Chemical mapping of a 207-nucleotide RNA with 2A3 and DMS. The data come from the RNA Mapping Database (RMDB), library M2RFPK.

RNA sequence: GGGAACGACUCGAGUAGAGUCGAAAAAAAUCACCUCGGUAUGAUUAGGGUGAGACCUAGGAACCGUAGGGGUAUUCUCAAAGGAAGCUUUUGCAGUGACUCCCAUGUAAGUGGGAUAUAACAACAGAUCAGUUUCGCAGUUUCGACUGCGAAACAACCAUACUUUUGUGUUCGCACAAAAGUAUGGAAAAGAAACAACAACAACAAC
Reactivity to 2A3 in 0.01 (KOAc 150mM, MgCl2 10mM, bicine 150mM(pH8.5), 24C), signal-to-noise 4, nucleotides 027 to 156: a000a000a030u080c030a060c020c030u030c000g050g000u230a150u210g040a110u070u030a020g010g000g010u070g120a100g050a070c000c000u020a020g010g050a030a010c010c010g020u140a030g000g000g020g010u000a020u040u040c040u020c000a070a050a020g100g020a100a050g040c040u140u080u130u200g050c100a040g020u020g050a030c050u000c010c010c000a020u030g060u150a140a100g010u010g000g000g010a020u030a020u020a060a010c050a010a010c010a020g070a080u140c070a040g010u000u000u010c000g000c000a000g000u010u020u180c150g100a010c000u000g000c000g000a000a000a000c000a000a000
Reactivity to DMS in 0.01 (KOAc 150mM, MgCl2 10mM, bicine 150mM(pH8.5), 24C), signal-to-noise 1, nucleotides 027 to 156: a030a040a070u000c020a020c000c030u000c000g020g010u000a080u000g020a270u000u000a000g000g020g000u000g020a240g010a160c020c010u010a030g000g020a130a050c020c000g010u000a050g020g000g030g010u000a060u010u000c020u000c060a100a100a160g000g000a070a170g050c030u000u000u000u000g000c030a100g020u000g010a140c180u000c010c000c010a020u000g000u030a070a190g030u010g000g050g010a060u000a030u000a110a080c030a080a070c090a040g010a040u010c050a160g030u000u000u000c000g000c020a000g000u000u000u020c230g000a040c000u000g000c030g000a000a000a000c000a020a100
Annotation:
The reactions ran in a buffer of 150 mM KOAc, 10 mM MgCl2 and 150 mM bicine (pH 8.5), at 24 C.